An RNA of 177 nucleotides, treated with DMS and read out base by base. The RNA was probed in 150 mM KOAc, 10 mM MgCl2 and 150 mM bicine (pH 8.5) at 24 C. DMS adducts were read by reverse transcription with MarathonRT. Values cover nucleotides 27 to 126. Source: RMDB library OK2TRN, as collected in RNAgym.
RNA sequence: GGGAACGACUCGAGUAGAGUCGAAAAGCCGUCGAUGCCCUGAACAUGAGCAAGAAGGCAGGCCGUGGGGUGCGGGGUCGCAGUUAGGCUGGGAAGGCAGCACUUGAACUUGUCAAUACCAGCCGCCAUAGCGGCUAGGCUUCGGCCUAGCCGCUAUAAAAGAAACAACAACAACAAC
Reactivity to DMS in 0.01 (KOAc 150mM, MgCl2 10mM, bicine 150mM(pH8.5), 24C), signal-to-noise 2, nucleotides 027 to 126: g000c040c020g020u000c070g000a130u030g020c030c030c020u000g020a140a060c160a080u000g000a120g010c060a110a120g010a110a120g000g010c030a050g000g000c080c060g010u000g010g000g020g030u010g030c090g000g010g000g000u000c050g040c070a070g010u000u000a060g000g020c010u000g000g000g000a140a110g000g000c010a010g020c070a100c140u000u020g010a070a050c050u000u000g010u010c010a040a070u010a180c010c010a020g000c010c000g010c140c070